[RMDB]
RNA sequence: GGGAACGACUCGAGUAGAGUCGAAAACAGCUUCAGCACGAUGAAAACGAUGGUCAGUAGACCGCCAAAACCGAUGCCGCCGUCACUGCUGCUAGAACUUGAACUCAUUUCACUUCCUCUCGAAUGAAGGAUCAAACUUCUUAAUUGCAAUCCAUAGCUGACCUAAUACCUUCGGGUAUUAGGUCAGAAAAGAAACAACAACAACAAC
Reactivity to 2A3 in 0.01 (KOAc 150mM, MgCl2 10mM, bicine 150mM(pH8.5), 24C), signal-to-noise 2, nucleotides 027 to 156: c000a000g060c000u050u040c060a010g000c060a000c050g180a140u130g070a090a040a000a000c070g080a170u170g080g000u000c020a020g080u110a120g190a030c020c050g000c020c020a000a060a060a080c050c030g000a020u080g000c020c000g030c010c030g020u030c020a010c040u090g030c000u030g010c010u020a050g030a070a030c020u030u070g010a010a030c000u010c050a060u020u100u050c040a060c070u090u030c000c020u020c010u010c060g080a020a020u150g020a070a000g010g030a010u090c040a000a030a050c000u050u010c010u080u160a090a110u140u060g000c000a020a050u030c010c020a000u120a040g050
Structure probing data (2A3) for a 207-nucleotide construct. The reactions ran in a buffer of 150 mM KOAc, 10 mM MgCl2 and 150 mM bicine (pH 8.5), at 24 C. Source: RMDB library OK3TST, as collected in RNAgym.